This 207-nucleotide RNA was probed chemically with DMS and 2A3.

[RMDB]
RNA sequence: GGGAACGACUCGAGUAGAGUCGAAAAGGGCUAUACCGGGCCCGAUACCGGAAUUAGUAGUUUUCUACGAGAGGCCCAAUCUGCGGCCCAAUGCAGUGUAGGUCGAAUCGAGGACCGAGACUCGAUAAUUACGUCGAUAGAUGGACGAUUCCAUCAAGAGUAGUAAUGACUUCGGUCAUUACUACUCAAAAGAAACAACAACAACAAC
Reactivity to DMS in 0.01 (KOAc 150mM, MgCl2 10mM, bicine 150mM(pH8.5), 24C), signal-to-noise 1, nucleotides 027 to 156: g000g040g000c030u010a070u000a230c070c040g040g000g000c050c020c170g000a010u000a040c020c000g000g000a110a130u030u000a050g020u030a050g000u000u020u000u020c000u020a070c020g000a120g000a150g030g010c020c010c010a080a140u000c020u000g050c090g080g000c080c020c080a040a080u010g020c040a040g000u000g050u000a040g030g010u000c010g020a100a080u000c020g010a050g020g020a260c090c080g020a130g000a070c010u000c030g000a050u000a080a150u000u020a120c080g000u030c030g000a180u000a150g000a050u000g040g030a120c070g010a300u000u010c020c000a030u010c080a020a290
Reactivity to 2A3 in 0.01 (KOAc 150mM, MgCl2 10mM, bicine 150mM(pH8.5), 24C), signal-to-noise 2, nucleotides 027 to 156: g010g000g000c020u040a050u040a220c030c000g000g010g020c040c010c030g040a030u030a010c000c010g000g090a060a040u130u070a060g040u020a040g060u110u090u120u140c060u100a050c030g040a050g010a030g130g010c010c000c000a020a050u010c030u020g040c010g040g100c000c050c070a020a030u190g010c020a000g020u010g010u170a020g050g000u000c010g040a000a050u040c030g000a000g050g030a030c040c180g030a030g060a090c000u000c000g010a000u050a080a170u200u080a110c060g060u060c010g060a030u080a230g000a000u030g000g000a000c030g070a170u150u000c010c010a010u010c010a070a000
For DMS the reverse transcriptase was MarathonRT. The reactions ran in a buffer of 150 mM KOAc, 10 mM MgCl2 and 150 mM bicine (pH 8.5), at 24 C.